[RMDB]
RNA sequence: GGGAACGACUCGAGUAGAGUCGAAAAAGAUAUGGAUCCUUUGUCAGCUCCGAAAGGUCGAUGAAAGUAAUCGGAAACGAUUACUGGAGACCUAGUAGCUGAGCUUGGAUUUAAGGAUCCUAAGUCACGUCUGAUGAAAGUUCGCUUUCAUCAGACGAAAAGAAACAACAACAACAAC
Reactivity to 2A3 in 0.01 (KOAc 150mM, MgCl2 10mM, bicine 150mM(pH8.5), 24C), signal-to-noise 1, nucleotides 027 to 126: a000g050a000u120a000u120g000g010a010u010c010c000u010u000u000g020u040c020a040g020c000u080c010c020g050a070a050a010g030g020u030c000g300a300u040g020a000a040a040g020u000a000a000u010c000g000g010a050a040a060c000g000a000u010u010a010c030u030g000g010a010g020a020c000c000u000a020g000u010a000g010c200u170g000a000g030c000u060u170g200g000a060u270u300u140a010a020g010g010a000u000c000c000u000a140a030g010u000c000a010
Reactivity to DMS in 0.01 (KOAc 150mM, MgCl2 10mM, bicine 150mM(pH8.5), 24C), signal-to-noise 1, nucleotides 027 to 126: a040g020a020u000a300u020g000g010a020u000c000c000u000u040u000g000u000c000a080g000c000u000c000c020g020a210a200a160g000g010u000c000g010a110u020g060a150a100a030g000u000a030a000u000c000g050g010a080a070a220c020g020a000u000u020a000c000u000g010g000a070g020a000c000c000u000a020g020u000a160g030c300u020g000a000g010c040u020u010g030g030a030u030u000u000a000a010g030g000a020u000c000c000u000a000a100g000u000c050a250